[RMDB]
RNA sequence: GGGAACGACUCGAGUAGAGUCGAAAAACGUAUACACAUACACACCUGUGCACACACGUGUACAUGUAUAUCCUCACACACGUACACACUUAUCCUCACACACGUGUACACACAUAUACACAUCUGCACACGUGUGUACAUGCAUAUCACACGUACACCAUAUCGGCGGUUUCGACCGCCGAUAUGGAAAAGAAACAACAACAACAAC
Reactivity to 2A3 in 0.01 (KOAc 150mM, MgCl2 10mM, bicine 150mM(pH8.5), 24C), signal-to-noise 2, nucleotides 027 to 156: a000c120g010u100a040u090a030c080a030c010a050u070a030c060a020c000a000c020c040u020g000u010g010c010a030c010a000c000a000c220g010u020g000u020a000c000a020u000g050u000a070u040a020u060c080c030u070c030a020c010a030c000a000c130g000u010a020c010a010c000a030c060u130u160a080u160c070c050u050c030a070c000a000c000a010c140g000u000g000u010a000c020a000c000a000c000a020u020a000u040a020c010a000c000a080u000c010u040g010c020a010c000a020c060g000u000g000u000g000u030a000c020a000u070g040c010a040u030a030u150c030a020c050a020c180g020u100a050c040a040